[RMDB]
This 177-nucleotide RNA was probed chemically with DMS. It was measured as part of the RMDB library M2PK50.
RNA sequence: GGGAACGACUCGAGUAGAGUCGAAAAUCUGUAACGUUCGCGUUACAGAAAAGGGUAUGAGAGUACCAGAUCAGAUCAUCCCAGAUCAGGAAACAGAACAAAAAAGGGCCACGUUCGCGUGGCCCAACAAAUAAAUAUACUUCGGUAUAUUUAUUUGAAAAGAAACAACAACAACAAC
Reactivity to DMS in 0.01 (KOAc 150mM, MgCl2 10mM, bicine 150mM(pH8.5), 24C), signal-to-noise 2, nucleotides 027 to 126: u000c000u000g010u000a000a000c000g020u000u030c260g020c020g010u000u000a000c000a030g010a000a020a050a100g010g010g010u000a030u000g010a270g010a250g000u000a000c000c000a180g000a160u000c060a080g010a030u000c030a040u000c000c000c010a030g000a000u000c010a070g020g000a080a150a060c150a120g020a040a050c050a020a060a080a050a130a140g030g010g030c010c000a000c020g060u000u010c210g040c000g050u000g000g000c000c000c010a010a020